[RMDB]
An RNA of 170 nucleotides, treated with DMS and 2A3 and read out base by base. The data come from the RNA Mapping Database (RMDB), library 15KLIB. The 2A3 profile rests on 86,180 reads. For DMS, 100,080 sequencing reads were counted. DMS adducts were read by reverse transcription with MarathonRT.
RNA sequence: GGGAACGACUCGAGUAGAGUCGAAAAGACGGUCCUGAGAACUCUUAUCUUCCUGCUUAGAAGAGGAGUCUCCUGGACGCUUCCGCCCGCUCGGGAUGGGCCUCAGUGCCGACGAGGAGUCCGCAGGUUGCCUACCUGUUCGCAGGUAGGAAAAGAAACAACAACAACAAC
Reactivity to DMS in 0.01 (KOAc 150mM, MgCl2 10mM, bicine 150mM(pH8.5), 24C), signal-to-noise 9, nucleotides 027 to 129: g040a040c080g010g020u030c010c020u000g020a080g020a070a040c020u000c010u000u050a140u000c030u000u000c020c160u030g070c260u060u030a080g010a040a030g020a020g020g000a000g000u000c000u010c000c090u000g000g000a040c020g000c030u000u000c030c050g030c000c000c000g040c050u030c040g020g010g010a070u030g020g030g000c040c030u020c060a120g010u030g060c020c050g000a060c050g010a040g010g000a040g040u010c030c100g020c030a050g020g030u010u030g020
Reactivity to 2A3 in 0.01 (KOAc 150mM, MgCl2 10mM, bicine 150mM(pH8.5), 24C), signal-to-noise 9, nucleotides 027 to 129: g050a020c100g050g100u010c000c000u040g000a040g020a170a070c000u010c020u070u110a090u110c000u020u020c020c050u140g180c130u250u280a030g010a010a000g010a010g010g000a000g010u000c010u000c020c060u030g000g000a000c010g030c030u060u010c030c010g020c010c000c000g050c020u050c030g020g000g030a040u060g040g020g000c000c010u080c050a090g040u080g110c010c010g030a040c020g000a020g040g000a010g010u000c020c020g000c010a010g050g040u090u130g030